[RMDB]
RNA sequence: GGGAACGACUCGAGUAGAGUCGAAAAUGGUGAAUGUUCGUUAUCUUUCAACACUUUUUCAUCUGUGUUUUCAUUUGUAACUUCCACAUCUUCUUCAUCUUCUUUACGACGACGUUUUGGUAAGAAGUGUCAGCUAAUUUUUCGAAAUUAGCUGACAAAAAGAAACAACAACAACAAC
Reactivity to DMS in 0.01 (KOAc 150mM, MgCl2 10mM, bicine 150mM(pH8.5), 24C), signal-to-noise 3, nucleotides 027 to 126: u000g000g020u000g020a060a040u000g000u000u000c080g010u000u010a100u010c070u000u000u010c070a040a060c010a020c040u000u020u000u000u000c090a060u000c080u000g020u010g000u000u000u000u000c030a070u010u000u000g010u010a050a130c110u000u000c020c010a060c110a070u010c040u000u000c000u000u010c040a060u000c020u000u000c010u000u010u010a070c100g000a120c090g010a060c090g010u000u000u000u000g020g000u000a040a050g000a050a060g010
Reactivity to 2A3 in 0.01 (KOAc 150mM, MgCl2 10mM, bicine 150mM(pH8.5), 24C), signal-to-noise 2, nucleotides 027 to 126: u120g010g000u020g030a120a060u080g020u090u070c060g020u030u050a070u090c040u000u190u080c060a040a000c010a050c070u060u060u040u140u110c080a130u030c070u030g060u000g060u070u050u000u070c040a050u000u060u100g080u020a050a090c030u030u000c020c000a030c010a140u030c020u050u000c000u060u040c020a050u000c000u070u000c030u060u080u070a070c080g050a030c030g020a000c020g060u050u030u080u070g080g000u060a030a050g050a080a020g060